The record gives the reactivity of an RNA of 177 nucleotides to DMS and 2A3. The DMS profile rests on 2,065 reads. High DMS reactivity at an A or C suggests that its Watson-Crick edge is free. For DMS the reverse transcriptase was MarathonRT. It was measured as part of the RMDB library OK2TST. The RNA was probed in 150 mM KOAc, 10 mM MgCl2 and 150 mM bicine (pH 8.5) at 24 C.
RNA sequence: GGGAACGACUCGAGUAGAGUCGAAAAAGCAAUGUGGAACCCGUAGUACGCGAGUUCAAGAAGGGUGACGUGAUCGUGAGGAAGGGAUUCGUGCUCACAGAGGACGAUGUGGCCACUCUCAACUUGCAGACUAGUUUGCAUUCGUGCAAACUAGUCUAAAAGAAACAACAACAACAAC
Reactivity to DMS in 0.01 (KOAc 150mM, MgCl2 10mM, bicine 150mM(pH8.5), 24C), signal-to-noise 3, nucleotides 027 to 126: a040g000c060a060a040u020g030u000g050g010a020a010c010c010c000g040u010a170g040u000a090c120g040c020g000a030g000u000u010c050a090a070g000a120a050g000g000g000u000g020a020c040g070u000g000a020u000c040g020u000g000a110g010g010a170a110g010g010g010a100u000u000c070g040u000g000c040u000c030a050c120a170g010a090g010g000a050c040g000a050u000g010u010g010g000c020c020a030c070u000c040u000c040a100a120c040u010u000g000c260
Reactivity to 2A3 in 0.01 (KOAc 150mM, MgCl2 10mM, bicine 150mM(pH8.5), 24C), signal-to-noise 2, nucleotides 027 to 126: a000g160c090a050a110u180g020u090g100g040a030a030c000c020c020g060u030a030g090u050a040c120g000c030g020a030g010u000u060c070a090a040g090a060a030g120g000g000u000g000a040c040g040u100g040a030u060c040g030u040g060a080g090g080a070a090g060g010g020a010u080u100c070g020u120g100c000u020c030a080c020a080g020a010g020g100a000c050g000a020u010g110u150g130g000c030c000a010c000u000c000u000c000a020a140c020u020u000g000c000